[RMDB]
RNA sequence: GGGAACGACUCGAGUAGAGUCGAAAAGAUAUGGAUUCACUACCCACCGAACUACACCCAAGUUCGGAAACGAACUUGGGUGCGAGGUGAAUCCUAAGUCAAAGCGGAGUACUUCGGUACUCCGCAACUAAAGAUAAGACUUCGGUCUUAUCUUUAGAAAAGAAACAACAACAACAAC
Reactivity to DMS in 0.01 (KOAc 150mM, MgCl2 10mM, bicine 150mM(pH8.5), 24C), signal-to-noise 6, nucleotides 027 to 126: g010a080u010a090u010g000g000a020u000u000c000a010c000u000a130c070c050c070a300c160c050g010a090a060c090u010a300c000a020c010c000c000a010a000g000u000u000c000g010g010a010a040a060c000g000a000a010c000u000u000g010g000g020u000g000c010g020a170g020g010u000g000a020a010u000c000c000u000a030a090g010u010c060a070a100a130g000c010g010g000a020g000u000a000c010u000u010c220g030g010u000a000c000u000c000c000g020c000a010a030
Reactivity to 2A3 in 0.01 (KOAc 150mM, MgCl2 10mM, bicine 150mM(pH8.5), 24C), signal-to-noise 3, nucleotides 027 to 126: g030a020u110a060u170g000g000a010u010u020c010a000c030u130a160c050c050c100a080c060c090g050a150a090c120u140a020c220a010c020c010c000a000a010g000u010u000c000g000g000a000a000a010c000g000a000a010c000u000u000g000g000g010u000g000c000g010a020g000g010u000g000a000a000u000c000c000u010a050a010g060u060c080a160a060a030g010c010g000g000a010g000u010a010c000u080u150c300g090g000u010a000c010u030c010c000g000c010a000a000

An RNA of 177 nucleotides, treated with DMS and 2A3 and read out base by base. Values cover nucleotides 27 to 126. Source: RMDB library TTRDEL, as collected in RNAgym.